[RMDB]
RNA sequence: GGGAACGACUCGAGUAGAGUCGAAAAGUCGCGUAAGUUUAUCACACUUUUGGAGUCGGCUUAAGAACUUCUAAUCUAGCUAGAAUCUUUCAAGCUGUAAUCUUUGCUAGAUGCUCUUUUUGUCAUACCUUAGCAAAAAGAAAAGAAUAAGGUUGCUCACUCUUAGAAUCUUCGGAUUCUAAGAGUGAAAAGAAACAACAACAACAAC
Reactivity to 2A3 in 0.01 (KOAc 150mM, MgCl2 10mM, bicine 150mM(pH8.5), 24C), signal-to-noise 4, nucleotides 027 to 156: g030u010c020g000c020g100u070a030a060g030u080u100u120a190u170c040a030c000a010c070u060u110u100u180g130g030a100g040u160c020g020g000c000u020u020a030a000g040a070a080c070u040u040c010u030a070a070u000c000u000a010g010c000u010a000g010a020a040u040c030u060u160u190c120a090a050g030c030u030g090u180a140a160u100c090u150u150u220g000c000u000a000g000a010u000g000c000u000c000u000u000u010u010u010g020u040c010a010u020a100c000c000u020u020a000g000c000a010a000a000a000a000g000a010a030a000a000g060a030a040u140a110a010g010g000u010u000g000c010u000
The record gives the reactivity of an RNA of 207 nucleotides to 2A3. The RNA was probed in 150 mM KOAc, 10 mM MgCl2 and 150 mM bicine (pH 8.5) at 24 C. 2A3 adducts were read by reverse transcription with SuperScript II with manganese. It was measured as part of the RMDB library ARCHII.